[RMDB]
RNA sequence: GGGAACGACUCGAGUAGAGUCGAAAACGCUGGGCUAGUAGACGCCCUACAUGGGAGCUGAAGCGCGCACGGCAUCGAUCAUGUAGUGCGCGUCACUAGCCUGUGCUGAAGCGCGCACGGCAACCGAAAGGUGCGAGAGUCCUCAUUCGUGAGGAAAUGACGUAUGUAUAUUCGUAUACAUACGUCAAAAAGAAACAACAACAACAAC
Reactivity to 2A3 in 0.01 (KOAc 150mM, MgCl2 10mM, bicine 150mM(pH8.5), 24C), signal-to-noise 9, nucleotides 027 to 156: c020g010c010u030g000g000g000c000u000a000g010u020a130g010a010c000g000c000c000c000u000a000c000a000u100g060g080g080a060g000c020u030g040a240a040g020c010g000c010g010c010a030c020g010g000c020a170u280c150g130a150u140c030a000u000g000u000a000g010u030g080c230g000c000g080u000c000a000c000u010a000g000c000c000u000g000u000g000c000u030g020a130a030g000c010g000c000g000c010a020c020g020g000c020a030a010c010c000g060a120a030a020g020g000u030g010c010g000a050g020a020g110u010c000c010u000c000a030u100u150c210g120u040g000a010g000g000a040a050a070
Reactivity to DMS in 0.01 (KOAc 150mM, MgCl2 10mM, bicine 150mM(pH8.5), 24C), signal-to-noise 5, nucleotides 027 to 156: c040g020c040u010g010g020g010c000u000a030g020u000a140g030a050c020g020c000c000c010u010a010c020a030u000g010g000g010a090g030c010u010g000a100a100g010c000g020c000g020c010a300c060g020g010c020a220u010c140g010a100u010c050a040u000g020u000a020g020u010g020c140g040c000g030u000c010a030c020u000a020g010c000c000u010g010u000g030c000u010g000a190a040g020c000g020c020g000c000a210c030g020g000c040a060a140c010c010g000a100a120a150g020g000u000g010c010g010a150g000a170g010u000c000c010u000c000a090u000u010c220g010u000g000a010g030g000a010a060a160